[RMDB]
RNA sequence: GGGAACGACUCGAGUAGAGUCGAAAAUAUCCUCGUUUCGACGAGGAUAACAGAAAACUCAUGCGAAAUAAAACGCUGACAGGCAUGAGAAAAGUCAGCGAAACAUACGGGUCUUCGGACCCGUAAACCUACCUUACUGUUUCGACAGUAAGGUAGGAAAAGAAACAACAACAACAAC
Reactivity to DMS in 0.01 (KOAc 150mM, MgCl2 10mM, bicine 150mM(pH8.5), 24C), signal-to-noise 2, nucleotides 027 to 126: u000a010u000c010c010u000c000g030u000u010u020c150g030a020c010g040a000g010g000a010u000a000a080c160a160g000a110a020a090a110c010u000c000a000u020g010c000g000a120a100a080u010a060a060a120a100c060g000c000u000g000a010c020a070g000g000c000a020u000g010a020g000a070a040a110a100g000u000c000a010g010c000g020a140a100a100c180a120u010a000c000g010g010g000u000c010u000u000c190g040g010a020c000c010c000g000u010a000a020a090
Reactivity to 2A3 in 0.01 (KOAc 150mM, MgCl2 10mM, bicine 150mM(pH8.5), 24C), signal-to-noise 3, nucleotides 027 to 126: u030a000u020c000c000u000c010g010u010u040u140c200g120a010c010g000a020g010g010a000u000a000a000c010a010g170a020a070a000a000c010u010c000a010u000g020c020g090a300a100a000u120a050a110a070a050c090g000c000u000g010a000c010a020g000g110c010a000u020g010a000g000a040a210a010a000g000u000c000a000g000c000g030a070a040a000c030a010u080a000c010g000g000g010u000c010u030u040c120g080g000a000c000c000c010g000u000a000a000a000